[RMDB]
RNA sequence: GGGAACGACUCGAGUAGAGUCGAAAAUCAAAUAAUUCCACCGACUGCCCAUUGUGGGUUACCAGUUGCUCUGAUGAUGGCCCAAGUGGGAGUAAAGAGAAGAAGCCAGAUACGAUCAACAAAAAAACCUUUCUUAUCAGUUCGCUGAUAAGAAAGGAAAAGAAACAACAACAACAAC
Reactivity to DMS in 0.01 (KOAc 150mM, MgCl2 10mM, bicine 150mM(pH8.5), 24C), signal-to-noise 1, nucleotides 027 to 126: u010c120a050a070a140u010a040a140u010u000c010c040a130c140c070g010a060c020u020g010c000c000c030a050u000u000g040u010g000g000g000u010u010a030c040c000a010g020u000u010g040c100u030c040u000g000a080u010g010a140u000g000g010c000c010c000a080a020g010u010g000g000g000a040g000u010a030a030a080g010a120g000a050a110g000a080a060g000c030c060a060g030a060u000a070c170g010a070u010c100a050a000c110a020a030a090a050a080a090a030
Reactivity to 2A3 in 0.01 (KOAc 150mM, MgCl2 10mM, bicine 150mM(pH8.5), 24C), signal-to-noise 1, nucleotides 027 to 126: u120c000a040a000a050u080a040a110u090u050c050c000a040c000c030g050a020c020u220g160c020c000c030a030u070u120g090u070g140g000g000u000u000a020c000c000a030g030u050u090g290c050u050c020u200g110a110u050g020a050u040g010g000c000c000c010a020a000g020u030g000g010g000a010g000u000a030a090a010g100a010g020a020a020g010a010a010g060c020c020a010g010a080u100a030c030g030a120u080c060a000a080c000a000a040a030a000a020a030a100
This 177-nucleotide RNA was probed chemically with DMS and 2A3. 2A3 adducts were read by reverse transcription with SuperScript II with manganese. For DMS the reverse transcriptase was MarathonRT. Conditions: 150 mM KOAc, 10 mM MgCl2 and 150 mM bicine (pH 8.5), 24 C. The data come from the RNA Mapping Database (RMDB), library M2PK90.